[RMDB]
Structure probing data (DMS and 2A3) for a 177-nucleotide construct.
The 2A3 profile rests on 2,764 reads.
RNA sequence: GGGAACGACUCGAGUAGAGUCGAAAACGGGAAGCCUGUUCCAAGAUGAGGUUUCUCACCCCCUCGAGGGGGUAAGGCCCCCGGCAGACCACCGGGUUGAUAGGCCAGAACUGGAAGCACAGUAAUGCACUACCGCAAGAUUCGUCUUGCGGUAGUGAAAAGAAACAACAACAACAAC
Reactivity to DMS in 0.01 (KOAc 150mM, MgCl2 10mM, bicine 150mM(pH8.5), 24C), signal-to-noise 3, nucleotides 027 to 126: c100g010g010g020a010a030g010c000c000u000g010u020u000c120c110a080a160g000a130u030g000a070g000g040u000u000u000c030u000c010a100c000c010c000c000c000u000c300g020a180g010g000g000g000g010u010a010a070g010g010c000c020c010c010c010g020g040c070a100g000a120c160c130a220c000c010g000g000g020u060u030g010a130u050a130g000g020c000c000a110g020a070a100c010u010g000g000a120a060g040c090a090c040a020g000u030a130a100u040g040
Reactivity to 2A3 in 0.01 (KOAc 150mM, MgCl2 10mM, bicine 150mM(pH8.5), 24C), signal-to-noise 4, nucleotides 027 to 126: c030g030g000g000a010a000g000c000c010u050g110u210u120c090c030a090a040g080a070u230g120a020g020g000u000u020u000c010u000c000a040c000c030c010c000c000u130c150g040a300g000g000g000g000g000u020a030a080g030g000c000c000c010c010c020g000g010c150a080g020a150c040c000a000c020c010g000g020g000u030u030g100a120u080a070g020g000c000c000a030g030a020a010c040u030g030g050a100a070g030c080a020c030a130g060u120a130a000u100g030

Values cover nucleotides 27 to 126.
The reactions ran in a buffer of 150 mM KOAc, 10 mM MgCl2 and 150 mM bicine (pH 8.5), at 24 C.
For 2A3 the reverse transcriptase was SuperScript II with manganese.
It was measured as part of the RMDB libraries RFM100 and RFMREP.